[RMDB]
RNA sequence: GGGAACGACUCGAGUAGAGUCGAAAAAGAGCGCGUUUCUCGGUCAUGCGGUUCUAUCGAUCAUGAAGAUGCGAUGACCGAAGAACAAUUGGUGCGUGCCAUUGAGAUCGGUAAGCGUAUCGCCGACAGCGUCUUAAGGUUUCGACCUUAAGACGCUAAAAGAAACAACAACAACAAC
Reactivity to DMS in 0.01 (KOAc 150mM, MgCl2 10mM, bicine 150mM(pH8.5), 24C), signal-to-noise 2, nucleotides 027 to 126: a140g010a060g010c010g020c010g010u020u000u000c030u000c000g000g000u010c010a010u000g000c040g000g010u000u000c040u010a130u020c040g020a110u010c240a140u020g040a030a110g000a050u000g010c020g020a060u000g010a000c010c000g030a020a040g000a060a020c100a100a080u020u000g000g010u020g030c170g010u010g000c040c010a080u010u020g000a120g020a130u000c030g000g010u000a070a140g020c020g000u000a060u000c070g000c000c040g000a050c230
Reactivity to 2A3 in 0.01 (KOAc 150mM, MgCl2 10mM, bicine 150mM(pH8.5), 24C), signal-to-noise 3, nucleotides 027 to 126: a000g010a000g000c010g000c020g050u000u070u040c000u030c010g020g000u020c020a040u300g300c000g050g060u090u010c030u100a280u060c030g150a110u140c050a080u240g060a040a040g040a040u100g090c080g050a020u000g010a000c000c040g010a010a010g010a010a020c010a010a080u140u090g130g000u160g090c100g060u150g000c000c000a020u010u130g090a110g040a180u020c000g010g000u020a040a010g070c010g040u050a070u070c000g000c010c000g010a020c050